[RMDB]
RNA sequence: GGGAACGACUCGAGUAGAGUCGAAAAUAAGAGAUUGCGCUUAUCCUAAAGGUGUCAGACGUGAGGCGGAGCCUCGUUAAAAAUCCUAUCUGACAAGCGUUUAGUUCGGAUGAGCCGCGCCAUCGUUGUGCGUCUCAUUCUUCGGAAUGAGACGCACAAAAGAAACAACAACAACAAC
Reactivity to 2A3 in 0.01 (KOAc 150mM, MgCl2 10mM, bicine 150mM(pH8.5), 24C), signal-to-noise 1, nucleotides 027 to 126: u300a150a000g040a000g000a030u090u050g000c000g010c000u010u030a000u000c000c080u010a030a020a020g140g050u030g000u000c020a000g000a030c000g230u280g050a000g000g030c230g010g020a080g000c000c000u010c000g080u000u000a000a000a000a000a000u010c000c030u120a060u000c010u010g010a000c000a000a020g090c020g050u050u090u140a020g000u000u170c030g000g000a000u000g030a050g020c060c000g010c000g000c000c000a040u010c000g080u060u010